[RMDB]
RNA sequence: GGGAACGACUCGAGUAGAGUCGAAAACAGAGCUGAUGGGCCAUGUACCUAACCAAAAUGAGAUCCCAUCUUGCACACUGUGCUAAUUUGAGAUUCUCAUGCCUCCUACUUGGAGAGAUCUGGACUACUAACUGUAUGACGUUCGCGUCAUACAGAAUCUAAUCGUAUGCUUCGGCAUACGAUUAGAAAAAGAAACAACAACAACAAC
Reactivity to 2A3 in 0.01 (KOAc 150mM, MgCl2 10mM, bicine 150mM(pH8.5), 24C), signal-to-noise 6, nucleotides 027 to 156: c020a020g020a020g040c030u060g030a100u100g060g010g010c040c030a070u090g030u090a090c010c020u080a070a100c050c030a070a070a020a060u030g010a030g010a060u040c000c010c000a010u010c010u010u060g010c000a020c020a050c090u250g010u000g030c040u150a070a080u040u020u050g050a050g000a040u240u040c000u000c020a010u100g030c000c000u030c000c010u110a230c120u120u190g010g000a030g000a010g000a030u030c060u080g030g030a030c050u100a040c020u050a300a060c000u010g000u000a000u000g000a000c010g020u040u020c250g020c000g080u020c000a000u000a000c000a000g000a000a010
Reactivity to DMS in 0.01 (KOAc 150mM, MgCl2 10mM, bicine 150mM(pH8.5), 24C), signal-to-noise 2, nucleotides 027 to 156: c040a070g030a110g000c040u000g010a090u000g040g020g030c040c010a100u000g030u000a090c010c010u000a050a120c080c120a030a060a150a110u000g000a030g000a070u000c000c000c010a050u000c090u000u000g000c010a040c040a200c140u000g030u000g040c010u010a020a060u000u010u020g010a050g000a030u000u000c000u000c000a040u000g000c080c010u010c040c010u010a090c100u020u000g010g000a110g010a100g000a070u000c040u000g000g000a170c100u000a210c250u000a040a210c010u000g010u000a000u020g010a030c000g020u000u010c250g030c030g010u000c000a010u010a010c000a010g010a020a070
An RNA of 207 nucleotides, treated with 2A3 and DMS and read out base by base. Reactivities are given for positions 27 through 156. For 2A3 the reverse transcriptase was SuperScript II with manganese. For DMS the reverse transcriptase was MarathonRT. 2A3 is a SHAPE reagent: it acylates the 2'-hydroxyl of flexible nucleotides of all four kinds. It was measured as part of the RMDB library M2RFPK. The 2A3 profile rests on 4,520 reads. Conditions: 150 mM KOAc, 10 mM MgCl2 and 150 mM bicine (pH 8.5), 24 C.